The record gives the reactivity of an RNA of 207 nucleotides to DMS and 2A3.
[RMDB]
RNA sequence: GGGAACGACUCGAGUAGAGUCGAAAAAUGAGAUCCCAUCUUGCACACUGUGCUAAUUUGAGAUUCUCAUGCCUCCUACUUGGACAGAUCUGGACUAGAAGUCAGGGCAUCUGACUCUGCCAGCCACAAAACGUACAAGGCUUCGGCCUUGUACGAACCAAGGGUUAACGUUCGCGUUAACCCUUGGAAAAGAAACAACAACAACAAC
Reactivity to DMS in 0.01 (KOAc 150mM, MgCl2 10mM, bicine 150mM(pH8.5), 24C), signal-to-noise 1, nucleotides 027 to 156: a010u000g010a040g020a040u000c000c000c000a050u010c090u000u020g000c000a020c040a210c090u050g000u010g030c020u020a020a050u000u000u010g010a030g020a030u000u000c010u000c000a010u000g000c190c040u000c030c010u010a040c150u040u000g000g020a170c160a160g000a130u010c000u010g010g000a040c090u020a040g000a090a060g030u000c010a050g020g010g060c180a160u010c040u020g000a040c020u020c020u000g000c030c010a000g000c070c030a180c050a010a060a100a200c020g050u000a010c020a020a030g010g000c000u000u000c250g030g000c000c000u000u000g010u000a010c000g030a000a040
Reactivity to 2A3 in 0.01 (KOAc 150mM, MgCl2 10mM, bicine 150mM(pH8.5), 24C), signal-to-noise 3, nucleotides 027 to 156: a000u010g000a010g010a000u010c010c000c000a000u000c010u000u020g000c020a040c060a110c240u300g010u000g020c070u120a040a080u010u020u020g030a030g000a030u280u050c000u000c000a010u020g030c000c020u010c000c000u060a120c060u070u130g050g040a030c020a090g080a150u060c010u010g030g030a130c070u110a110g040a150a010g100u000c000a000g040g070g100c050a160u110c070u000g000a000c000u000c000u020g010c000c000a020g030c030c000a100c030a010a070a070a020c000g010u000a000c000a010a000g000g010c010u040u140c210g050g000c000c000u000u000g000u010a000c000g000a000a000
Values cover nucleotides 27 to 156. For DMS the reverse transcriptase was MarathonRT. Conditions: 150 mM KOAc, 10 mM MgCl2 and 150 mM bicine (pH 8.5), 24 C. Source: RMDB library M2RFPK, as collected in RNAgym.